An RNA of 177 nucleotides, treated with 2A3 and DMS and read out base by base. Source: RMDB library OK2TST, as collected in RNAgym.
RNA sequence: GGGAACGACUCGAGUAGAGUCGAAAAGCGCGCCGUCGAACCACUUGAGCUCGAAGCGCGCGACGGGGAUGUCGUGGAUCUUGCCGAGGUUAUGCUCGAUGCGCGUGACUUCGAGCCAGUUGCCGUACGAUUACGAGCCUUUCGAGGCUCGUAAUCGAAAAGAAACAACAACAACAAC
Reactivity to 2A3 in 0.01 (KOAc 150mM, MgCl2 10mM, bicine 150mM(pH8.5), 24C), signal-to-noise 1, nucleotides 027 to 126: g020c010g000c010g000c010c050g160u060c020g010a050a030c010c030a030c190u030u130g040a030g020c000u000c010g020a000a000g010c010g000c000g000c010g040a010c040g010g020g010g050a030u030g060u080c050g060u090g020g050a160u020c080u100u240g050c040c000g020a000g000g090u180u140a040u060g060c020u000c080g090a120u160g070c010g010c000g000u000g110a150c000u000u000c010g020a010g000c000c000a010g010u010u090g060c020c000g050u060a030
Reactivity to DMS in 0.01 (KOAc 150mM, MgCl2 10mM, bicine 150mM(pH8.5), 24C), signal-to-noise 1, nucleotides 027 to 126: g000c020g000c020g030c030c060g020u000c030g020a050a090c080c070a100c080u010u010g040a160g010c000u000c000g000a060a080g000c050g010c000g020c000g010a030c020g020g010g000g020a040u000g010u010c020g000u030g030g000a140u010c130u010u000g020c040c040g000a060g020g010u000u010a080u000g010c010u000c010g000a180u010g030c020g000c000g020u000g000a140c010u000u000c000g000a010g010c000c030a050g000u000u010g010c030c060g000u010a160